RNA sequence: GGGAACGACUCGAGUAGAGUCGAAAACUGUGGUGUCCAACGCGCGUCCGGUACGUAAUCUACGCAACGUUCCGUAUAGUGCAGAAACUCGUGAGAGUAGCAUCGCAUCCUUUUCUCACCCAAAUAAGAGUAGUGGGGUAUUCGUACCCCACUACUCAAAAGAAACAACAACAACAAC
Reactivity to DMS in 0.01 (KOAc 150mM, MgCl2 10mM, bicine 150mM(pH8.5), 24C), signal-to-noise 1, nucleotides 027 to 126: c140u000g000u000g010g010u000g000u000c030c200a070a090c190g010c030g040c050g040u010c070c000g010g010u000a070c040g030u050a050a190u000c050u000a100c120g070c080a170a110c000g000u000u000c000c000g010u000a020u000a040g020u010g010c010a170g000a110a060a100c000u000c000g000u010g010a170g030a020g000u000a100g040c020a050u000c000g010c010a000u000c120c040u000u010u010u010c020u000c020a220c020c000c060a030a060a120u010a050a100
Reactivity to 2A3 in 0.01 (KOAc 150mM, MgCl2 10mM, bicine 150mM(pH8.5), 24C), signal-to-noise 2, nucleotides 027 to 126: c030u000g020u010g030g020u010g000u060c050c090a110a040c070g020c000g000c010g010u020c020c020g010g000u020a020c000g050u020a060a100u100c040u100a070c030g010c110a040a000c000g010u000u000c020c000g010u030a060u060a060g020u040g000c010a030g150a130a110a020c020u000c020g020u060g060a120g000a000g030u000a000g020c000a000u040c030g030c000a060u110c040c040u040u050u090u000c070u050c010a080c020c070c010a040a040a000u250a170a010
Structure probing data (DMS and 2A3) for a 177-nucleotide construct. Conditions: 150 mM KOAc, 10 mM MgCl2 and 150 mM bicine (pH 8.5), 24 C. For DMS, 672 sequencing reads were counted.